RNA sequence: GGGAACGACUCGAGUAGAGUCGAAAAGGGAGAGCCGAGCAGAGGCAUAGCGAACUGCGCACGGGGAAGCCUUGAGGGAAUGCCGUAGGACCCGGGUUCGAUUCCCGGCUGCUCCACCGAAGGGCCAAGCUCACGAUACUUUCGAGUAUCGUGAGCUAAAAGAAACAACAACAACAAC
Reactivity to 2A3 in 0.01 (KOAc 150mM, MgCl2 10mM, bicine 150mM(pH8.5), 24C), signal-to-noise 1, nucleotides 027 to 126: g100g010g010a100g020a000g060c000c000g050a040g060c100a020g020a060g060g000c040a020u080a010g030c040g110a090a060c000u130g000c050g000c000a070c020g010g000g000g030a040a040g000c000c030u050u010g080a090g060g000g060a090a090u050g030c000c010g020u050a050g000g050a050c050c000c000g020g020g000u070u050c080g020a060u030u070c020c000c000g000g000c020u080g010c000u000c000c000a050c050c030g000a070a000g040g000g020c010c000a050
Reactivity to DMS in 0.01 (KOAc 150mM, MgCl2 10mM, bicine 150mM(pH8.5), 24C), signal-to-noise 2, nucleotides 027 to 126: g010g000g010a120g000a140g040c000c030g020a090g030c030a100g030a030g000g050c050a060u050a230g000c190g020a130a150c150u030g000c100g050c020a100c060g000g050g000g020a220a070g030c010c010u030u000g000a170g140g010g020a200a030u050g030c010c070g040u000a060g010g000a070c080c000c000g000g000g000u000u000c200g000a150u040u000c080c060c010g010g050c180u030g000c010u010c030c010a010c050c070g000a140a070g000g000g000c000c080a130